[RMDB]
RNA sequence: GGGAACGACUCGAGUAGAGUCGAAAAGAUCGGAAACAGCAGCAGGUGAGUCCGCCUUAUGUGAAGGAUCGGCUGAAACACGAGGAAAUACUGAGCCAACGCAAGACGGCAGCCGAACAGUAGCAACAAAACGCUUACGUGUUCGCACGUAAGCGAAGUCCUAGUAAGCCUUCGGGCUUACUAGGACAAAAGAAACAACAACAACAAC
Reactivity to 2A3 in 0.01 (KOAc 150mM, MgCl2 10mM, bicine 150mM(pH8.5), 24C), signal-to-noise 1, nucleotides 027 to 156: g070a080u160c090g040g030a070a130a000c030a040g050c010a000g010c000a000g020g020u050g020a040g020u070c070c060g030c000c030u120u090a070u100g040u030g090a020a000g080g080a020u070c000g000g000c000u010g060a020a070a000c100a000c000g010a110g100g080a000a140a000u130a060c120u070g010a000g050c000c000a040a020c070g010c050a040a040g070a030c100g040g000c000a010g020c030c010g000a000a000c010a020g060u110a030g000c000a000a040c000a030a190a000a000c000g000c000u000u010a000c000g000u000g000u050u040c150g020c070a010c000g000u000a000a010g010c000g000a000a000